[RMDB]
RNA sequence: GGGAACGACUCGAGUAGAGUCGAAAAGACCCUAUCACAUCUAGUUAAUUGUGAGAGAAUCUUAUGUCUCUGUUUCAUAAGAUUGAUUGGACAAUUUCUCACCGGUGUAAAGAGUGGUCCUAAGGGAAUCAUCGAAAGUGAAUUGUGCGGAACAGGGCAUUUGCCAUAACUUCGGUUAUGGCAAAUGAAAAGAAACAACAACAACAAC
Reactivity to 2A3 in 0.01 (KOAc 150mM, MgCl2 10mM, bicine 150mM(pH8.5), 24C), signal-to-noise 2, nucleotides 027 to 156: g070a000c010c010c020u010a050u080c020a010c000a050u030c100u130a010g160u200u160a150a090u160u100g000u020g020a010g000a010g010a040a000u000c010u010u000a000u000g030u010c000u050c020u070g070u010u070u020c030a010u020a030a020g050a000u010u040g090a100u020u170g040g000a020c030a080a150u000u100u020c040u010c020a050c080c080g050g010u030g020u040a130a160a000g100a040g030u090g000g030u020c010c020u040a050a030g070g010g030a030a040u090c020a020u040c030g020a170a020a010g060u040g010a020a100u110u030g050u090g090c030g030g040a020a000c010a030g000g040g000
Reactivity to DMS in 0.01 (KOAc 150mM, MgCl2 10mM, bicine 150mM(pH8.5), 24C), signal-to-noise 2, nucleotides 027 to 156: g030a090c000c000c010u010a100u000c030a050c000a030u000c050u010a220g010u000u010a090a140u000u010g000u000g000a070g020a160g000a020a020u010c000u000u000a040u000g000u000c040u000c070u000g030u010u000u010c000a020u000a030a030g010a070u000u000g020a150u000u000g050g030a110c050a090a100u000u000u000c000u000c020a110c030c060g040g010u000g020u010a070a090a130g000a110g000u000g050g000u010c010c000u020a060a180g040g020g020a100a070u020c050a060u000c000g000a090a070a160g000u000g000a080a100u000u000g000u000g010c100g000g030a050a050c030a020g010g010g000